[RMDB]
RNA sequence: GGGAACGACUCGAGUAGAGUCGAAAAUACGCUCGCAUCCCGAUUUCAAAUUGCUACACAAUUUACAAGCAGACAUUUGCUACAAGUUCGUCCUUUGGGAUUAUGAACGUAGCAAUAUUUAUGGUACCUUAAUCUACCGGUUCGCCGGUAGAUUAAGAAAAGAAACAACAACAACAAC
Reactivity to 2A3 in 0.01 (KOAc 150mM, MgCl2 10mM, bicine 150mM(pH8.5), 24C), signal-to-noise 2, nucleotides 027 to 126: u020a000c010g040c030u010c050g050c020a050u010c010c000c000g030a070u100u100u070c040a050a040a030u060u040g000c010u080a010c040a000c000a120a080u030u090u160a110c060a010a120g060c040a040g020a020c040a090u040u000u060g010c000u000a000c000a180a090g010u000u010c000g000u000c020c020u030u080u290g140g000g000a030u020u070a120u270g010a000a000c040g000u000a000g000c010a000a000u020a020u000u140u050a070u030g070g000u040a050c000
Reactivity to DMS in 0.01 (KOAc 150mM, MgCl2 10mM, bicine 150mM(pH8.5), 24C), signal-to-noise 2, nucleotides 027 to 126: u020a070c080g020c060u010c100g020c120a140u010c000c000c020g010a170u010u010u010c100a060a050a030u000u000g010c030u000a070c230a140c070a050a030u000u010u000a090c210a070a090g020c090a070g000a080c130a070u000u000u000g000c000u000a020c040a030a100g020u000u000c000g000u000c000c010u000u000u000g030g020g010a000u010u000a080u010g010a000a030c040g000u000a010g010c010a000a010u010a000u000u000u010a090u010g020g010u010a080c180
This 177-nucleotide RNA was probed chemically with 2A3 and DMS. DMS adducts were read by reverse transcription with MarathonRT. The reactions ran in a buffer of 150 mM KOAc, 10 mM MgCl2 and 150 mM bicine (pH 8.5), at 24 C. Reactivities are given for positions 27 through 126. The 2A3 profile rests on 1,228 reads.